[RMDB]
RNA sequence: GGGAACGACUCGAGUAGAGUCGAAAAGGCAAGGUCCGCAGUGACGUGCUAGACGCCGGAUGCGGAUACGCCGAACUGUCAUUGGCCCUUGCCGCCGACGGCUACACCGUGGUCGGCAUCGACCUCAAAAAUCCUACGCUUUCGAGCGUAGGAUUUUAAAAGAAACAACAACAACAAC
Reactivity to DMS in 0.01 (KOAc 150mM, MgCl2 10mM, bicine 150mM(pH8.5), 24C), signal-to-noise 3, nucleotides 027 to 126: g010g030c020a020a050g000g010u010c010c050g030c020a050g000u000g000a270c300g000u000g050c140u000a100g010a060c050g000c010c190g030g030a230u010g010c010g010g000a090u000a020c130g000c010c010g000a190a080c040u000g010u000c090a220u010u000g020g010c070c010c010u010u000g000c020c010g040c030c000g000a020c000g020g000c040u000a100c180a230c100c060g000u000g010g020u000c000g000g010c080a070u020c100g010a060c070c030u040c150a030
Reactivity to 2A3 in 0.01 (KOAc 150mM, MgCl2 10mM, bicine 150mM(pH8.5), 24C), signal-to-noise 1, nucleotides 027 to 126: g030g000c000a010a000g050g000u010c000c010g000c000a000g000u030g030a120c040g020u080g030c060u030a050g010a100c040g000c040c180g120g030a130u300g020c020g000g000a010u020a020c010g020c020c020g010a020a000c010u020g060u120c070a280u090u190g000g000c000c020c000u000u020g020c000c010g010c010c010g030a010c020g000g070c000u040a040c120a020c140c050g010u100g000g020u050c020g020g020c000a020u110c040g100a090c010c030u080c050a060

The record gives the reactivity of an RNA of 177 nucleotides to DMS and 2A3. The 2A3 profile rests on 1,479 reads.